Record summary: An RNA of 177 nucleotides, treated with 2A3 and DMS and read out base by base. The reactions ran in a buffer of 150 mM KOAc, 10 mM MgCl2 and 150 mM bicine (pH 8.5), at 24 C. For 2A3, 1,451 sequencing reads were counted. The DMS profile rests on 1,119 reads.
RNA sequence: GGGAACGACUCGAGUAGAGUCGAAAAGAAAGGCAGCCAGUGCAGCCCACGCAGCGGCAUGCUUUUGCAUGCCCAGUCGAGCCCACGACUGAGGGCAGCUGCGGCACUGAGGGCAGCUGCCGAAAGAGCACGAUACUGGAUUCGUCCAGUAUCGUGCAAAAGAAACAACAACAACAAC
Reactivity to 2A3 in 0.01 (KOAc 150mM, MgCl2 10mM, bicine 150mM(pH8.5), 24C), signal-to-noise 1, nucleotides 027 to 126: g170a040a070a000g020g000c000a000g000c080c040a060g100u080g070c000a030g160c010c000c000a010c010g080c010a000g000c010g020g000c000a000u000g000c020u300u300u120u300g000c010a000u010g000c010c000c020a000g020u000c000g030a040g020c000c010c000a010c000g030a000c010u030g020a050g000g180g000c030a000g000c000u000g000c000g060g000c030a060c130u070g080a130g040g070g000c030a010g000c000u010g010c000c010g000a010a020a020g040a000
Reactivity to DMS in 0.01 (KOAc 150mM, MgCl2 10mM, bicine 150mM(pH8.5), 24C), signal-to-noise 1, nucleotides 027 to 126: g000a110a120a170g010g050c010a020g000c010c000a080g030u000g030c050a120g060c070c050c050a300c020g000c000a030g010c060g000g010c000a010u000g000c020u000u000u000u010g030c010a020u000g000c020c020c000a000g000u000c000g000a110g030c000c010c010a300c040g010a010c010u000g000a140g020g000g000c100a100g030c000u000g020c010g030g000c110a080c080u000g000a080g010g000g000c130a180g000c010u010g000c020c020g000a010a060a090g010a200